The data come from the RNA Mapping Database (RMDB), library OK3TST. An RNA of 207 nucleotides, treated with DMS and 2A3 and read out base by base. High DMS reactivity at an A or C suggests that its Watson-Crick edge is free. High 2A3 reactivity points to a flexible backbone, as in loops and unpaired stretches. For 2A3, 2,001 sequencing reads were counted.
RNA sequence: GGGAACGACUCGAGUAGAGUCGAAAAGAAGUGGAUUGCAGAUGCUAGAUUUGGAGAGAUGCAGUUUGUGCAAAGGAGGGUCUGGAACAGGCCUUCGAAAUGUGUCUGCCAAGGCUAAAAUAAUCACAUUUUGUAUUUGCACAGCAUUUUCAUUGUAUCCAGUAAUUUACUUCGGUAAAUUACUGGAAAAAGAAACAACAACAACAAC
Reactivity to DMS in 0.01 (KOAc 150mM, MgCl2 10mM, bicine 150mM(pH8.5), 24C), signal-to-noise 2, nucleotides 027 to 156: g000a110a090g020u010g030g010a100u000u010g010c030a120g010a160u000g010c040u010a110g010a120u000u010u010g020g010a150g010a090g010a080u000g010c020a090g010u000u000u000g050u010g040c010a040a030a100g020g000a060g020g020g020u000c020u010g010g020a090a130c130a070g020g010c010c000u010u000c020g020a020a030a040u010g020u010g020u000c060u010g020c080c080a060a120g010g010c040u010a060a040a130a070u010a090a140u010c040a030c020a080u010u000u010u010g000u000a150u000u010u000g000c000a030c040a140g000c040a090u000u000u010u000c050a120u000u000g010u000a160
Reactivity to 2A3 in 0.01 (KOAc 150mM, MgCl2 10mM, bicine 150mM(pH8.5), 24C), signal-to-noise 2, nucleotides 027 to 156: g080a060a010g040u070g040g010a060u030u070g040c050a020g030a070u030g040c010u060a050g020a130u060u070u100g030g020a020g000a010g010a020u040g030c010a010g090u080u250u110g000u010g000c000a020a000a010g060g010a010g010g020g000u010c030u040g030g070a140a120c050a070g000g010c000c000u000u020c020g020a000a010a010u000g000u000g020u020c050u050g030c020c020a040a050g060g000c040u090a090a030a100a050u110a030a140u130c000a000c010a020u000u030u030u060g070u060a100u010u010u020g010c010a020c010a020g030c010a030u050u070u100u110c020a030u000u190g020u040a050